[RMDB]
This 177-nucleotide RNA was probed chemically with 2A3 and DMS. In probing experiments dimethyl sulfate is read out at A N1 and C N3, which are open when not base-paired. It was measured as part of the RMDB library OK2TRN.
RNA sequence: GGGAACGACUCGAGUAGAGUCGAAAAUCAUCUGCAACUAUUCUGAGACAGGCCCCCCGGAACCACCCUACAGCUUCCACCAGGUGACCAUUGACAAAGUCAGCCCCUAUGGGUUUUUUGCACAUGACCUAUAUUAAGGGUUCGCCCUUAAUAUAGGAAAAGAAACAACAACAACAAC
Reactivity to 2A3 in 0.01 (KOAc 150mM, MgCl2 10mM, bicine 150mM(pH8.5), 24C), signal-to-noise 1, nucleotides 027 to 126: u030c000a000u020c000u060g030c020a120a030c030u130a050u100u140c040u070g080a040g060a150c060a070g160g040c060c000c000c030c000c020g000g020a030a000c010c010a000c000c000c010u000a030c000a020g030c010u050u010c020c000a030c000c010a010g050g000u020g080a020c010c010a060u020u060g010a030c030a060a050a000g030u030c000a010g050c070c040c020c030u050a080u030g010g010g000u000u020u020u000u040u130g030c030a020c000a020u060g030a030
Reactivity to DMS in 0.01 (KOAc 150mM, MgCl2 10mM, bicine 150mM(pH8.5), 24C), signal-to-noise 4, nucleotides 027 to 126: u000c050a050u000c050u000g010c040a070a090c080u000a080u010u000c070u000g000a160g010a090c040a070g010g020c020c020c010c010c000c030g000g010a060a060c050c040a060c040c020c020u000a090c100a060g020c050u000u010c020c040a090c060c050a060g010g010u010g010a060c040c040a090u010u000g010a100c060a050a090a120g010u000c050a080g010c050c000c020c180u020a080u010g020g020g010u000u000u000u000u000u000g020c040a050c110a060u000g010a170